[RMDB]
RNA sequence: GGGAACGACUCGAGUAGAGUCGAAAAACAAUACUGAACAAGCGGAUAAAAUCGAACAAACCAUUCGUGAAUUGCUCAUUGCUAAUCCUGAUAAAACGCUUGCACCACUAGCAGAGAGUGAUGAUAGGAAAGGCCAUAAUUUCGAUUAUGGCCUUUCAAAAGAAACAACAACAACAAC
Reactivity to DMS in 0.01 (KOAc 150mM, MgCl2 10mM, bicine 150mM(pH8.5), 24C), signal-to-noise 2, nucleotides 027 to 126: a070c060a080a060u010a090c130u000g000a160a070c020a030a060g000c030g010g000a090u010a030a060a040a080u010c020g000a040a080c100a030a060a110c190c080a160u010u000c020g050u010g000a120a020u000u000g010c040u000c090a050u000u010g030c040u000a080a050u010c000c030u010g010a080u030a030a100a050a040c170g000c050u000u000g020c110a080c000c030a080c100u000a040g020c030a060g000a070g010a020g010u000g000a020u000g020a110u020a100g020
Reactivity to 2A3 in 0.01 (KOAc 150mM, MgCl2 10mM, bicine 150mM(pH8.5), 24C), signal-to-noise 1, nucleotides 027 to 126: a000c010a020a050u230a220c050u040g060a120a030c000a000a000g020c030g060g020a060u210a120a060a000a070u050c050g040a030a010c040a120a150a010c020c000a040u050u010c030g000u040g090a050a080u080u050g020c030u070c080a060u000u130g050c000u060a140a040u000c000c000u000g030a110u100a080a120a000a000c050g020c000u000u000g000c040a030c100c000a030c040u050a010g050c040a030g080a030g000a000g060u040g070a030u050g020a020u000a030g250
An RNA of 177 nucleotides, treated with DMS and 2A3 and read out base by base. Reactivities are given for positions 27 through 126. The RNA was probed in 150 mM KOAc, 10 mM MgCl2 and 150 mM bicine (pH 8.5) at 24 C. The DMS profile rests on 1,011 reads.